[RMDB]
RNA sequence: GGGAACGACUCGAGUAGAGUCGAAAAGAUAUGGACCACGGUAAUACAGAGAACUACUACAGUCGGAAACGACGUAGCUCUGUGCCAGUGGUCCUAAGUCAAAGAUUCAUGCUUCGGCAUGAAUCAAGAUUUAUGGGUAGUUCGCUACCCAUAAAUCAAAAGAAACAACAACAACAAC
Reactivity to DMS in 0.01 (KOAc 150mM, MgCl2 10mM, bicine 150mM(pH8.5), 24C), signal-to-noise 4, nucleotides 027 to 126: g000a030u010a300u010g000g010a010c000c000a000c000g010g010u000a120a100u000a300c010a020g000a010g000a100a030c090u020a300c010u000a020c010a130g040u000c000g000g010a140a100a120c000g000a000c000g030u000a000g000c000u000c000u000g010u000g000c020c010a070g020u000g000g010u000c000c000u000a000a040g010u000c040a060a140a060g000a000u000u010c000a010u000g010c000u000u000c230g020g010c010a000u000g010a000a000u000c000a060a070
Reactivity to 2A3 in 0.01 (KOAc 150mM, MgCl2 10mM, bicine 150mM(pH8.5), 24C), signal-to-noise 4, nucleotides 027 to 126: g030a020u070a040u140g010g000a000c000c000a010c020g020g000u130a270a130u160a280c020a010g040a010g000a120a050c100u250a020c010u020a030c300a150g000u010c000g010g040a070a070a060c010g000a000c000g000u000a010g000c000u010c010u020g010u000g000c000c040a060g000u010g000g000u000c000c000u000a010a010g010u000c020a000a060a090g010a010u000u020c000a000u010g000c010u070u090c260g160g000c000a010u020g010a000a000u000c000a000a010